[RMDB]
RNA sequence: GGGAACGACUCGAGUAGAGUCGAAAAAUAGGCUUAUCAAGAGAGGUGGAGAGACUGGCCCGAUGAAACCCGGCAGCCAGAAAUGGUGCCAAUUACUGCAGCGGAAACGUUGAAAGAUGAGCCGAUGGAACCCAUCCCUUCGGGGAUGGGAAAAGAAACAACAACAACAAC
Reactivity to 2A3 in 0.01 (KOAc 150mM, MgCl2 10mM, bicine 150mM(pH8.5), 24C), signal-to-noise 2, nucleotides 027 to 129: a000u120a030g000g000c010u000u000a000u060c000a070a010g030a010g030a050g120g060u050g100g060a070g030a000g020a010c040u020g010g010c000c020c000g020a030u160g050a020a060a010c050c010c000g060g000c160a100g100c000c020a030g040a040a060a010u080g040g010u070g020c010c000a000a000u140u020a090c030u010g020c000a010g020c000g000g060a080a050a000c070g030u080u070g050a180a010a010g020a070u000g010a000g010c000c000g000a010u000g040g000a030a020
Reactivity to DMS in 0.01 (KOAc 150mM, MgCl2 10mM, bicine 150mM(pH8.5), 24C), signal-to-noise 2, nucleotides 027 to 129: a010u060a000g010g010c010u020u040a070u000c110a120a090g080a180g040a000g010g040u010g000g000a070g000a090g000a160c000u070g030g010c040c020c200g020a070u000g000a050a060a100c090c090c060g020g010c120a100g000c040c030a010g010a050a050a050u050g020g020u040g000c040c020a000a000u000u090a060c140u030g020c120a020g000c080g030g020a090a060a100c000g080u070u000g010a080a120a120g000a010u020g010a030g000c030c010g000a100u010g000g010a090a090

Description: Structure probing data (2A3 and DMS) for a 170-nucleotide construct. For 2A3, 3,128 sequencing reads were counted. Conditions: 150 mM KOAc, 10 mM MgCl2 and 150 mM bicine (pH 8.5), 24 C. High 2A3 reactivity points to a flexible backbone, as in loops and unpaired stretches.